[RMDB]
RNA sequence: GGGAACGACUCGAGUAGAGUCGAAAAUGAAAGAAGGUGCAUUCAAAUACGCUAGAAGCACGAAUAGGCGACGCAUAGCGUAAAACUGAGAAAGCAGAUAACAAAAAUAAAAAGGCGUCGCGAAAAAACGUUAUUAGUCAUUCGUGACUAAUAACGUAAAAGAAACAACAACAACAAC
Reactivity to 2A3 in 0.01 (KOAc 150mM, MgCl2 10mM, bicine 150mM(pH8.5), 24C), signal-to-noise 3, nucleotides 027 to 126: u110g020a020a010a100g100a070a030g070g000u030g010c060a150u000u040c000a070a050a060u040a020c010g000c010u010a010g010a040a010g010c020a000c040g010a040a040u120a140g120g000c010g000a000c010g010c000a040u040a010g000c000g000u030a080a030a030a030c020u040g000a020g120a260a120a020g100c020a010g030a070u130a130a040c060a020a160a040a030a020u180a060a100a030a000a000g080g000c000g000u000c000g010c000g040a020a000a000a010a000
Reactivity to DMS in 0.01 (KOAc 150mM, MgCl2 10mM, bicine 150mM(pH8.5), 24C), signal-to-noise 3, nucleotides 027 to 126: u010g000a090a110a080g020a060a090g010g030u010g000c030a100u000u000c060a020a110a140u000a010c000g010c010u000a120g010a050a040g000c060a030c020g010a120a090u000a120g000g010c010g010a020c010g000c020a070u000a040g000c000g010u000a020a060a130a060c040u000g000a120g010a080a100a110g000c010a020g010a130u030a080a070c150a040a050a110a050a090u010a040a040a100a110a100g010g020c000g010u000c010g000c020g020a000a030a050a070a040
This 177-nucleotide RNA was probed chemically with 2A3 and DMS. Reactivities are given for positions 27 through 126. The reactions ran in a buffer of 150 mM KOAc, 10 mM MgCl2 and 150 mM bicine (pH 8.5), at 24 C. 2A3 is a SHAPE reagent: it acylates the 2'-hydroxyl of flexible nucleotides of all four kinds. The DMS profile rests on 3,024 reads.